[RMDB]
The record gives the reactivity of an RNA of 177 nucleotides to 2A3 and DMS.
RNA sequence: GGGAACGACUCGAGUAGAGUCGAAAACGAAAGGAUGGAAUAUUGUCGGACCUGCAUGGAUCAAUGUUAACGAUCAAUGGAAUUUUCUAGUUACAAAUACUGGUGCAGGGCCAGUCGCAAUUGAUAAUCCGGAGAAUUAGUUCGCUAAUUCUCCGGAAAAAGAAACAACAACAACAAC
Reactivity to 2A3 in 0.01 (KOAc 150mM, MgCl2 10mM, bicine 150mM(pH8.5), 24C), signal-to-noise 4, nucleotides 027 to 126: c050g080a120a020a070g110g020a030u200g030g120a160a060u120a030u090u040g050u100c030g000g000a010c000c000u000g000c000a010u040g060g030a000u060c080a030a090u140g140u210u150a010a040c020g070a030u060c000a020a120u180g080g070a110a150u080u070u110u070c080u070a080g010u010u030a090c020a040a120a010u120a100c050u110g110g010u010g010c000a000g000g000g000c000c000a020g020u070c010g000c010a020a060u030u110g010a030u090a120a010
Reactivity to DMS in 0.01 (KOAc 150mM, MgCl2 10mM, bicine 150mM(pH8.5), 24C), signal-to-noise 2, nucleotides 027 to 126: c070g010a070a100a080g040g000a090u010g020g020a120a090u020a030u010u020g020u020c080g010g010a040c000c000u020g020c040a030u020g000g000a040u010c130a060a150u000g010u020u030a030a040c070g030a030u010c070a070a110u050g010g050a110a160u000u010u010u050c050u010a080g000u010u000a050c070a050a040a080u030a050c060u000g000g020u010g010c010a040g000g000g000c000c010a030g010u030c230g010c020a010a000u010u000g000a080u080a070a060
The DMS profile rests on 3,685 reads. For 2A3, 2,417 sequencing reads were counted. Source: RMDB library OK1LIB, as collected in RNAgym. The reactions ran in a buffer of 150 mM KOAc, 10 mM MgCl2 and 150 mM bicine (pH 8.5), at 24 C.